RNA sequence: GGGAACGACUCGAGUAGAGUCGAAAAUGCAUGAUUCGCUGAUUGUCUACCAAAUAUCUUGCGGCUAAUUCUUGCUCCGCACGAACUCCUCCACCAGCAGGAAUACCUACAUAUGGUACAAUCCAGGCCAACUAACGAGAUUCGUCUCGUUAGUUGGAAAAGAAACAACAACAACAAC
Reactivity to 2A3 in 0.01 (KOAc 150mM, MgCl2 10mM, bicine 150mM(pH8.5), 24C), signal-to-noise 1, nucleotides 027 to 126: u070g000c040a050u090g050a130u230u090c050g000c070u040g010a100u000u120g000u090c040u010a030c000c030a050a090a010u130a020u040c040u030u060g000c000g040g000c010u040a090a080u210u050c060u050u070g060c060u000c030c000g000c020a010c030g010a080a080c040u020c000c000u040c010c020a050c020c000a020g010c030a000g020g000a030a040u050a050c010c000u090a110c040a140u170a050u180g010g030u010a030c010a020a020u000c010c020a020g060g000
Reactivity to DMS in 0.01 (KOAc 150mM, MgCl2 10mM, bicine 150mM(pH8.5), 24C), signal-to-noise 3, nucleotides 027 to 126: u010g030c090a070u000g010a120u000u000c090g000c040u000g000a100u020u000g000u000c110u000a120c030c050a050a120a110u000a110u000c050u010u010g010c120g010g000c180u000a050a100u000u000c030u000u000g010c090u000c040c040g010c060a060c130g000a070a110c090u000c010c020u000c030c080a070c060c060a070g000c070a040g000g010a050a100u000a060c060c030u000a060c200a070u000a060u010g000g000u000a020c090a090a090u000c060c070a110g010g010

The record gives the reactivity of an RNA of 177 nucleotides to 2A3 and DMS.
Source: RMDB library OK2TST, as collected in RNAgym.
The 2A3 profile rests on 1,567 reads.
The reactions ran in a buffer of 150 mM KOAc, 10 mM MgCl2 and 150 mM bicine (pH 8.5), at 24 C.
The DMS profile rests on 1,884 reads.